[RMDB]
RNA sequence: GGGAACGACUCGAGUAGAGUCGAAAACGGUGAGGUUGGCAAGGUCCUCGGUGAGCUUGUCGACGUUAUCCAUGCUGUUCAACAAGGAGCGCAUCGACCAGCCGAUGGGAAUGUCGAAGCAGUGGCGCAUACGCUAAUGGUUCGCCAUUAGCGUAUGAAAAGAAACAACAACAACAAC
Reactivity to 2A3 in 0.01 (KOAc 150mM, MgCl2 10mM, bicine 150mM(pH8.5), 24C), signal-to-noise 9, nucleotides 027 to 126: c040g000g030u040g020a050g020g080u030u030g020g000c020a040a030g060g130u020c020c030u130c090g060g090u300g010a030g020c010u010u010g000u010c000g000a010c010g010u030u050a030u050c000c000a030u080g010c040u080g030u130u110c060a100a110c040a120a120g060g000a070g020c010g000c030a050u030c030g020a030c020c020a020g040c020c010g110a150u210g060g000g040a050a070u090g010u060c030g020a040a020g030c070a030g030u040g080g000c030g000
Reactivity to DMS in 0.01 (KOAc 150mM, MgCl2 10mM, bicine 150mM(pH8.5), 24C), signal-to-noise 9, nucleotides 027 to 126: c130g010g010u000g000a070g010g020u000u000g000g010c010a010a010g000g010u010c010c010u040c190g000g020u040g010a050g000c020u000u000g000u000c000g010a010c010g000u000u000a080u010c010c030a160u010g010c040u010g000u000u010c080a110a100c150a090a080g010g000a100g000c040g000c020a090u010c030g010a050c040c120a140g020c020c050g010a090u040g010g010g010a090a050u030g010u000c020g000a060a070g000c050a070g020u010g000g010c040g000
Background
The record gives the reactivity of an RNA of 177 nucleotides to 2A3 and DMS. The reactions ran in a buffer of 150 mM KOAc, 10 mM MgCl2 and 150 mM bicine (pH 8.5), at 24 C. For DMS, 41,069 sequencing reads were counted. 2A3 adducts were read by reverse transcription with SuperScript II with manganese. It was measured as part of the RMDB library OK1LIB.